The data come from the RNA Mapping Database (RMDB), library ARCHII.
This 207-nucleotide RNA was probed chemically with 2A3.
The 2A3 profile rests on 679 reads.
[RMDB]
RNA sequence: GGGAACGACUCGAGUAGAGUCGAAAACAAUGCAGCAUUGCCCAGUAUAGCCUUUAGCUAGUCCGCUCCGGCGGGCCACAUCCUCCCUGUGCUGAAAGCCUUCCCCUUACAGGGGCGGUAUCAGCAGCCAAAGAAUGCCAGCGCGGCUUCUUCGGUUCAUAGGAUAGAAGUUCGCUUCUAUCCUAUGAAAAGAAACAACAACAACAAC
Reactivity to 2A3 in 0.01 (KOAc 150mM, MgCl2 10mM, bicine 150mM(pH8.5), 24C), signal-to-noise 1, nucleotides 027 to 156: c060a030a040u160g010c050a040g050c030a110u040u080g030c060c010c030a030g020u100a070u070a080g040c030c000u060u180u110a010g020c010u020a010g070u000c000c010g000c050u040c070c220g100g020c020g000g060g000c010c020a040c010a040u120c020c010u050c000c020c000u040g030u030g010c000u000g000a000a020a020g010c000c030u090u220c050c010c010c010u000u080a070c090a140g040g000g000g000c000g000g000u000a000u000c000a000g010c000a000g000c000c000a030a000a000g000a040a000u220g010c030c000a010g050c100g050c040g130g040c050u020u000c020u000u050c010g010g000u000u000
Values cover nucleotides 27 to 156. For 2A3 the reverse transcriptase was SuperScript II with manganese. The RNA was probed in 150 mM KOAc, 10 mM MgCl2 and 150 mM bicine (pH 8.5) at 24 C.